[RMDB]
The record gives the reactivity of an RNA of 177 nucleotides to DMS and 2A3.
For 2A3 the reverse transcriptase was SuperScript II with manganese.
Source: RMDB library M2PK90, as collected in RNAgym.
Values cover nucleotides 27 to 126.

RNA sequence: GGGAACGACUCGAGUAGAGUCGAAAAUAAAAUGGUAAGAACGGUUCCAAAGGAGCCGAAGGUCAUAGCUAUGGCAUCGAUCUAAAAUCUUAUCAAUUAGGUGACGAGCUUGGCUCUGAUCAAAAAACCUUAUGUAGGGUUUCGACCCUACAUAAGGAAAAGAAACAACAACAACAAC
Reactivity to DMS in 0.01 (KOAc 150mM, MgCl2 10mM, bicine 150mM(pH8.5), 24C), signal-to-noise 2, nucleotides 027 to 126: u010a060a090a060a120u040g010g010u000a070a080g010a090a190c030g000g020u000u000c010c010a060a120a260g000g020a020g010c020c000g030a050a080g020g000u000c000a000u020a060g010c000u010a040u010g020g000c010a020u000c090g000a030u010c010u000a040a030a100a060u000c140u000u020a140u020c130a110a070u010u000a000g010g010u010g000a140c060g000a080g010c010u000u000g010g030c010u000c020u010g000a090u010c010a000a040a080a080a050a080
Reactivity to 2A3 in 0.01 (KOAc 150mM, MgCl2 10mM, bicine 150mM(pH8.5), 24C), signal-to-noise 1, nucleotides 027 to 126: u180a000a080a000a070u070g020g020u050a060a000g020a120a020c020g020g030u020u000c010c050a230a170a190g050g000a010g000c040c020g020a040a040g020g000u000c020a010u050a050g000c000u080a080u240g110g000c020a030u010c020g030a010u020c000u080a050a040a100a130u060c050u090u140a110u150c000a070a170u050u040a040g060g000u000g000a030c010g000a000g020c060u060u050g060g000c010u000c030u010g040a020u000c050a010a030a020a040a020a080